[RMDB]
RNA sequence: GGGAACGACUCGAGUAGAGUCGAAAAAUACAGGAGGACAAAACAAUGGCUAUUGUAGGUACAAUUAUUAAAAUCAUCAAAGCAAUUAUCGACAUUUUCGUAAAAUAAUUUAAACGAAUUGAAUACUAAAACUUCUAUAAUUCGUUAUAGAAGUUUUAAAAGAAACAACAACAACAAC
Reactivity to 2A3 in 0.01 (KOAc 150mM, MgCl2 10mM, bicine 150mM(pH8.5), 24C), signal-to-noise 3, nucleotides 027 to 126: a000u130a020c010a000g010g010a030g000g040a040c030a020a030a030a000c030a080a050u060g040g000c020u050a020u050u150g070u090a050g010g030u080a030c010a060a050u090u080a020u110u270a120a050a070a010u120c120a080u050c060a080a050a030g050c020a030a070u160u090a090u170c010g070a030c030a040u100u170u030u010c010g000u050a010a030a050a080u200a090a120u070u140u090a100a190a020c020g010a010a020u050u120g010a070a050u100a150c040u020
Reactivity to DMS in 0.01 (KOAc 150mM, MgCl2 10mM, bicine 150mM(pH8.5), 24C), signal-to-noise 2, nucleotides 027 to 126: a060u030a040c100a120g000g000a080g010g020a100c080a090a070a080a060c150a050a050u030g000g030c020u020a070u020u020g010u030a020g000g010u010a090c080a080a070u010u030a050u070u030a080a090a020a080u000c050a070u020c020a090a000a120g010c060a010a030u030u000a050u000c030g000a090c060a020u070u000u010u010c000g000u000a030a050a050a060u020a040a060u020u010u050a080a050a040c030g000a010a040u000u000g000a030a060u010a070c070u020